[RMDB]
RNA sequence: GGGAACGACUCGAGUAGAGUCGAAAAAAGCAAUCUUUGGGUUUAUUGCCCCAAUCCUUGUUGACAAAUUUGGUGGCAAAGCGGCUAACGCUAUGGGCCGUAAGUCAAUCAAAAUGCCUGAUGGUUCCGACGUACAUAUGUUCGCAUAUGUACGUCGAAAAGAAACAACAACAACAAC
Reactivity to 2A3 in 0.01 (KOAc 150mM, MgCl2 10mM, bicine 150mM(pH8.5), 24C), signal-to-noise 2, nucleotides 027 to 126: a020a000g070c040a030a020u080c080u090u070u060g010g020g000u100u240u140a170u110u180g030c070c020c000c000a010a050u030c030c000u030u060g040u050u090g080a040c030a090a140a140u060u030u030g010g010u030g000g040c000a010a050a030g000c010g020g000c010u070a190a020c030g010c140u120a200u240g000g000g050c000c000g020u000a020a000g000u000c040a020a040u020c000a000a040a020a020u080g040c000c020u100g050a120u120g020g100u070u000c030
Reactivity to DMS in 0.01 (KOAc 150mM, MgCl2 10mM, bicine 150mM(pH8.5), 24C), signal-to-noise 2, nucleotides 027 to 126: a100a040g010c010a030a020u000c050u000u000u000g020g010g000u010u000u000a130u020u000g010c300c000c020c000a030a040u000c050c020u000u000g010u000u000g000a040c120a120a070a100u010u000u000g010g020u000g010g020c010a010a100a110g020c010g010g000c020u000a110a090c150g050c140u000a060u000g010g020g020c000c000g020u010a030a300g020u010c000a030a040u000c050a030a020a020a110u000g000c010c000u020g000a090u010g010g000u010u000c080